RNA sequence: GGGAACGACUCGAGUAGAGUCGAAAAGAUAUGGAAAGCGCUUUUGACGCAACCACAUCGGAAACGAUGUCACUUGCGAUAAGCCUUUCCUAAGUCAAAGGUUUUCACAGUUCGCUGUGAAAACCAAUCAUGGACAUUACUUCGGUAAUGUCCAUGAAAAAGAAACAACAACAACAAC
Reactivity to DMS in 0.01 (KOAc 150mM, MgCl2 10mM, bicine 150mM(pH8.5), 24C), signal-to-noise 4, nucleotides 027 to 126: g010a030u000a300u010g000g010a010a020a010g000c260g010c010u000u000u000u010g000a170c080g020c000a010a020c180c300a000c010a000u000c000g020g000a070a050a130c010g010a000u000g010u000c080a070c240u000u000g000c010g020a080u000a020a010g000c000c010u000u000u000c000c000u000a000a090g000u000c050a070a070a130g010g010u000u000u000u000c000a000c000a000g000u000u010c230g010c010u000g040u000g000a000a000a000a010c000c000a040a030
Reactivity to 2A3 in 0.01 (KOAc 150mM, MgCl2 10mM, bicine 150mM(pH8.5), 24C), signal-to-noise 3, nucleotides 027 to 126: g020a010u030a010u090g010g020a030a010a000g060c140g000c110u100u100u090u250g300a230c050g000c010a000a020c060c040a000c000a000u020c010g020g000a000a030a040c010g000a000u010g010u030c010a070c240u020u030g000c040g070a060u000a060a010g010c000c000u000u000u000c010c000u020a080a020g010u010c030a060a040a270g010g020u000u000u000u000c000a000c010a000g000u080u110c250g010c150u000g000u000g010a000a000a000a000c010c010a000a020
Chemical mapping of a 177-nucleotide RNA with DMS and 2A3. The reactions ran in a buffer of 150 mM KOAc, 10 mM MgCl2 and 150 mM bicine (pH 8.5), at 24 C. For DMS the reverse transcriptase was MarathonRT.